[RMDB]
RNA sequence: GGGAACGACUCGAGUAGAGUCGAAAAACGAGUCGUACGCGACUCGCAUGGUAUUGUCGGCGUAAAAGAACAAGACGUCACCGGACGCGACCGGGCUAAAAAGCGAAACGUCAUCUACGGAUGACGAAAAACGGACCUGGGUUCGCCCAGGUCCGAAUCAGGUUAACAACUUCGGUUGUUAACCUGAAAAAGAAACAACAACAACAAC
Reactivity to 2A3 in 0.01 (KOAc 150mM, MgCl2 10mM, bicine 150mM(pH8.5), 24C), signal-to-noise 2, nucleotides 027 to 156: a000c020g000a000g000u000c010g000u060a030c270g020c010g150a000c000u030c000g000c000a150u150g000g060u140a100u120u170g110u090c060g040g000c000g000u090a100a050a090a040g110a180a070c100a100a030g030a030c020g020u000c020a010c000c000g000g000a000c010g000c000g000a020c010c010g070g020g000c100u060a000a000a000a000a000g010c010g040a120a040a060c000g000u000c000a000u010c000u000a010c150g100g020a010u000g010a000c000g050a120a000a000a000a000c020g010g000a000c000c000u000g020g010g020u050u020c130g040c050c000c000a000g000g000u000c040c000g000a000a000
An RNA of 207 nucleotides, treated with 2A3 and read out base by base. Source: RMDB library M2RFPK, as collected in RNAgym. The reactions ran in a buffer of 150 mM KOAc, 10 mM MgCl2 and 150 mM bicine (pH 8.5), at 24 C.